[RMDB]
Annotation:
An RNA of 177 nucleotides, treated with DMS and 2A3 and read out base by base. The reactions ran in a buffer of 150 mM KOAc, 10 mM MgCl2 and 150 mM bicine (pH 8.5), at 24 C. Values cover nucleotides 27 to 126. The 2A3 profile rests on 1,609 reads. Reactivities are rounded to 0.1 and cut off at 0 and 3. For DMS, 2,046 sequencing reads were counted.
RNA sequence: GGGAACGACUCGAGUAGAGUCGAAAACGGGGCACAGGCAAGCGGACGAGCCAGUUAUCCCUCAGAGCUCCUGCUGCCUCGCCCGCUUUCUCUCGGAAACGUGAAGUGUGGCCUCAGCUGAAAGUGAGAGCAAAGAUACGUUCGCGUAUCUUUGCUCAAAAGAAACAACAACAACAAC
Reactivity to DMS in 0.01 (KOAc 150mM, MgCl2 10mM, bicine 150mM(pH8.5), 24C), signal-to-noise 2, nucleotides 027 to 126: c000g000g000g000g000c030a170c130a010g000g000c170a060a100g000c020g010g040a150c170g000a030g000c050c010a180g000u000u010a100u000c000c010c000u020c120a060g010a270g000c020u020c010c030u000g010c000u000g000c060c000u000c070g020c020c020c000g010c090u010u000u000c030u000c000u080c050g000g000a020a050a020c060g020u000g000a070a070g000u000g000u030g020g010c100c000u010c050a090g000c040u000g000a040a110a090g020u000g000a150
Reactivity to 2A3 in 0.01 (KOAc 150mM, MgCl2 10mM, bicine 150mM(pH8.5), 24C), signal-to-noise 3, nucleotides 027 to 126: c030g010g000g010g070c030a030c010a040g010g010c100a150a020g000c000g030g040a050c040g010a030g030c010c030a020g020u090u110a120u150c010c000c020u030c060a070g030a010g020c010u020c030c000u000g040c030u000g000c000c000u010c010g000c000c000c000g000c000u000u060u000c040u020c060u020c030g060g050a100a080a100c000g040u050g020a080a070g040u060g010u030g110g050c000c000u040c000a060g020c050u060g050a150a030a040g070u100g050a060